This 177-nucleotide RNA was probed chemically with DMS and 2A3.
It was measured as part of the RMDB libraries RFM100 and RFMREP.

RNA sequence: GGGAACGACUCGAGUAGAGUCGAAAAGAAAGAAAGUUGGUGAUUGCCAUCAGCGAGGUAUAGAGUUCCUACGUUGCGAGUUCGAAAUCGGUAGGAACUUCAUACCGUGCUCUUGGCUAGCCGAAAAAUUUGACACAGUGUUCGCACUGUGUCAAAUAAAAGAAACAACAACAACAAC
Reactivity to DMS in 0.01 (KOAc 150mM, MgCl2 10mM, bicine 150mM(pH8.5), 24C), signal-to-noise 3, nucleotides 027 to 126: g010a100a100a070g010a070a060a120g000u000u010g010g010u000g010a210u050u060g000c010c010a000u000c260a000g000c030g000a060g000g010u000a000u030a110g010a030g010u000u000c000c010u010a000c000g020u000u050g010c010g020a110g000u060u040c260g030a070a130a040u010c030g040g020u000a000g010g000a010a010c010u010u000c050a000u000a000c000c000g010u020g010c020u000c120u010u000g010g000c020u000a300g010c020c020g000a010a050a030a090
Reactivity to 2A3 in 0.01 (KOAc 150mM, MgCl2 10mM, bicine 150mM(pH8.5), 24C), signal-to-noise 5, nucleotides 027 to 126: g140a030a050a010g150a050a080a030g080u130u120g050g020u040g030a120u120u300g000c000c000a010u000c000a000g000c010g040a030g010g000u000a010u030a030g000a000g010u000u000c000c000u000a000c010g080u080u150g130c050g030a100g060u150u250c060g060a090a090a180u020c030g060g010u020a000g010g000a000a000c000u000u010c000a000u010a000c000c000g010u070g000c000u010c000u000u000g000g000c010u000a010g000c000c000g030a000a030a000a000